[RMDB]
RNA sequence: GGGAACGACUCGAGUAGAGUCGAAAACGCGAGACUUCUUUGGCCUUGAUGUUACGGACAAAUUCCGUAACCGUGUGAGGCCAACAUCAAAGAUGCGUACCUAGCUGCGUUUCAACCUGCGUGGGUUGAGGCGGCUUAGCGGAUUAGGGCGUUCUGCACACUGGUAAUCCUUCGGGAUUACCAGUGUAAAAGAAACAACAACAACAAC
Reactivity to 2A3 in 0.01 (KOAc 150mM, MgCl2 10mM, bicine 150mM(pH8.5), 24C), signal-to-noise 1, nucleotides 027 to 156: c050g000c020g020a180g100a190c090u130u030c100u100u040u100g000g000c000c000u020u080g030a030u110g040u000u000a000c000g000g000a000c160a120a140a190u240u040c000c000g000u000a000a000c000c040g070u050g130u150g050a000g010g000c000c000a000a000c000a020u030c010a000a000a150g080a030u140g000c010g040u100a270c000c000u020a010g000c000u100g000c030g040u010u040u050c000a000a010c000c030u170g150c120g250u300g040g050g000u000u000g060a000g000g000c000g030g000c050u040u090a040g000c010g030g060a120u100u280a090g030g000g070c050g020u050u020c010u080g000c020
This 207-nucleotide RNA was probed chemically with 2A3.
For 2A3 the reverse transcriptase was SuperScript II with manganese.
For 2A3, 555 sequencing reads were counted.
Source: RMDB library VIROID, as collected in RNAgym.
Conditions: 150 mM KOAc, 10 mM MgCl2 and 150 mM bicine (pH 8.5), 24 C.